An RNA of 177 nucleotides, treated with DMS and 2A3 and read out base by base. It was measured as part of the RMDB libraries RFM100 and RFMREP. For 2A3 the reverse transcriptase was SuperScript II with manganese. The reactions ran in a buffer of 150 mM KOAc, 10 mM MgCl2 and 150 mM bicine (pH 8.5), at 24 C.
[RMDB]
RNA sequence: GGGAACGACUCGAGUAGAGUCGAAAAGCCCUUCUCCUAGGUCAAAGUUUUGAAGUCUAGGUUCGAUUCCUAGUAUCUCAACCGAAAAGGGGAUAUAGUUCAACUGGUAGAGCACUGUAUUUUUCAUGUACCUACUUGAAUUCGUUCAAGUAGGUACAAAAGAAACAACAACAACAAC
Reactivity to DMS in 0.01 (KOAc 150mM, MgCl2 10mM, bicine 150mM(pH8.5), 24C), signal-to-noise 4, nucleotides 027 to 126: g010c000c010c000u010u000c020u000c020c020u010a070g030g030u010c140a090a120a130g000u000u010u000u000g000a040a160g010u000c000u010a000g000g000u000u000c220g000a300u040u020c010c000u010a020g000u000a060u000c020u000c020a100a070c030c050g000a070a050a080a070g000g000g000g000a040u010a040u020a040g000u010u000c100a070a090c080u010g010g000u010a050g000a090g010c060a050c070u000g030u000a030u030u000u010u000u000c070a140u010
Reactivity to 2A3 in 0.01 (KOAc 150mM, MgCl2 10mM, bicine 150mM(pH8.5), 24C), signal-to-noise 4, nucleotides 027 to 126: g040c000c000c000u010u020c020u020c010c000u040a070g060g010u080c060a130a060a130g020u060u110u120u070g070a040a020g070u020c000u000a010g000g000u000u040c080g040a040u090u060c000c000u010a010g020u040a100u060c020u010c030a040a040c010c000g070a100a090a060a050g020g010g000g000a000u020a010u020a040g040u020u090c020a110a030c050u070g100g010u110a050g000a030g070c020a000c060u050g050u160a250u070u070u010u030u070c050a080u040